[RMDB]
RNA sequence: GGGAACGACUCGAGUAGAGUCGAAAAGGUUCACCAGUUAAAGAUGUUCUGGGCCUGUCCGAAGAAGGGUUACAUCUUACACUGGUUUGAGGGUUACUCCUCCCUCAUACCAGACAAAGCACAACAACAACUACAGUUUGUUCGCAAACUGUAGUUGAAAAGAAACAACAACAACAAC
Reactivity to DMS in 0.01 (KOAc 150mM, MgCl2 10mM, bicine 150mM(pH8.5), 24C), signal-to-noise 6, nucleotides 027 to 126: g010g010u000u000c110a130c050c020a060g010u000u010a090a070a090g010a050u010g010u000u010c040u000g000g010g000c010c020u000g000u010c020c020g000a090a090g020a110a060g010g010g010u010u000a060c070a050u000c010u000u000a110c290a110c010u000g010g000u010u000u000g010a010g000g010g000u010u010a100c170u010c120c090u010c000c000c000u000c000a010u000a020c000c000a020g010a110c210a070a090a090g000c140a050c070a030a050c110a090a200
Reactivity to 2A3 in 0.01 (KOAc 150mM, MgCl2 10mM, bicine 150mM(pH8.5), 24C), signal-to-noise 4, nucleotides 027 to 126: g080g000u110u130c050a060c080c020a020g010u040u110a160a060a010g040a040u060g030u070u040c030u060g030g010g000c010c010u040g040u010c020c030g040a070a060g060a040a050g080g040g000u040u060a020c010a030u030c010u030u050a040c100a020c070u010g000g000u000u000u000g010a010g030g010g010u040u090a130c050u090c030c010u020c010c010c000u000c000a000u020a020c000c000a000g040a050c110a020a080a000g060c050a030c020a130a000c010a020a010

Background
Structure probing data (DMS and 2A3) for a 177-nucleotide construct. The data come from the RNA Mapping Database (RMDB), library OK2TST. Reactivities are given for positions 27 through 126. 2A3 adducts were read by reverse transcription with SuperScript II with manganese.